[RMDB]
This 177-nucleotide RNA was probed chemically with DMS and 2A3. For 2A3, 2,975 sequencing reads were counted. For 2A3 the reverse transcriptase was SuperScript II with manganese. Values cover nucleotides 27 to 126. For DMS, 7,946 sequencing reads were counted.
RNA sequence: GGGAACGACUCGAGUAGAGUCGAAAACUCAGCGCCUCCUGGCUGUACUUGCUCGGCCACGAUUUGACGAUGGGGGUCAGCAGGUCGAGCAGAAGCGCGGUGUCGGCCUUCUCCUCCUCCGGGCCGGUCCUUUAUGCCUAUUCGUAGGCAUAAAGGAAAAAGAAACAACAACAACAAC
Reactivity to DMS in 0.01 (KOAc 150mM, MgCl2 10mM, bicine 150mM(pH8.5), 24C), signal-to-noise 4, nucleotides 027 to 126: c020u010c020a130g020c050g010c040c030u010c050c050u000g010g000c020u000g010u010a050c050u000u000g000c010u000c040g020g000c000c000a120c120g010a090u000u010u010g020a070c100g010a130u010g000g000g010g020g010u000c010a030g010c060a060g000g010u000c010g010a030g010c020a010g010a070a060g010c060g020c030g000g010u010g020u000c010g010g010c020c020u000u000c060u000c020c020u010c010c000u000c030c070g010g000g020c030c010g000g000
Reactivity to 2A3 in 0.01 (KOAc 150mM, MgCl2 10mM, bicine 150mM(pH8.5), 24C), signal-to-noise 2, nucleotides 027 to 126: c010u010c010a010g020c010g020c030c000u070c040c040u040g200g000c020u020g100u090a080c030u060u060g010c010u020c040g030g000c010c020a160c120g170a210u120u050u240g060a050c050g030a130u170g080g030g010g020g080u010c000a010g000c010a000g000g010u020c000g040a000g020c000a000g040a040a010g030c030g010c040g020g050u050g050u030c030g030g000c010c010u050u030c020u020c010c000u000c000c000u000c020c010g010g010g000c030c020g000g000